RNA sequence: GGGAACGACUCGAGUAGAGUCGAAAACGGCAUGGUCCCAGCCUCCUCGCUGGCGCCGGCUGGGCAACAUUCCGAAGGGGACCGUCCCUCGGUAAUGGCGAAUGGGACCCAGAACUCUCUUUAGCUUCACCCUUCGGCUUCGGCCGAAGGAAAAGAAACAACAACAACAAC
Reactivity to 2A3 in 0.01 (KOAc 150mM, MgCl2 10mM, bicine 150mM(pH8.5), 24C), signal-to-noise 3, nucleotides 027 to 129: c030g000g000c000a020u140g020g000u050c000c010c000a000g000c000c000u010c000c000u020c040g010c050u070g000g050c050g020c020c000g010g030c010u040g000g010g020c000a030a030c010a040u020u030c000c000g020a110a110g030g010g000g030a120c010c040g220u250c010c000c000u040c000g000g020u050a080a060u040g010g000c040g070a000a040u140g040g010g000a010c000c010c010a040g060a030a000c010u030c000u000c000u010u020u100a040g010c020u050u060c020a040c010
Reactivity to DMS in 0.01 (KOAc 150mM, MgCl2 10mM, bicine 150mM(pH8.5), 24C), signal-to-noise 3, nucleotides 027 to 129: c060g050g070c030a030u030g040g000u050c000c010c000a110g000c030c000u050c060c040u010c270g050c030u020g020g020c170g010c050c090g010g020c000u020g000g020g060c130a150a060c090a070u000u050c000c000g040a100a050g040g050g050g030a160c170c150g030u020c020c010c010u010c030g010g030u040a050a150u020g000g000c080g020a090a090u000g000g010g020a090c040c000c090a060g000a160a130c070u000c080u020c030u030u050u040a060g000c090u000u000c040a080c100
Chemical mapping of a 170-nucleotide RNA with 2A3 and DMS. The RNA was probed in 150 mM KOAc, 10 mM MgCl2 and 150 mM bicine (pH 8.5) at 24 C. Reactivities are given for positions 27 through 129. Source: RMDB library 15KLIB, as collected in RNAgym. High 2A3 reactivity points to a flexible backbone, as in loops and unpaired stretches. For DMS the reverse transcriptase was MarathonRT.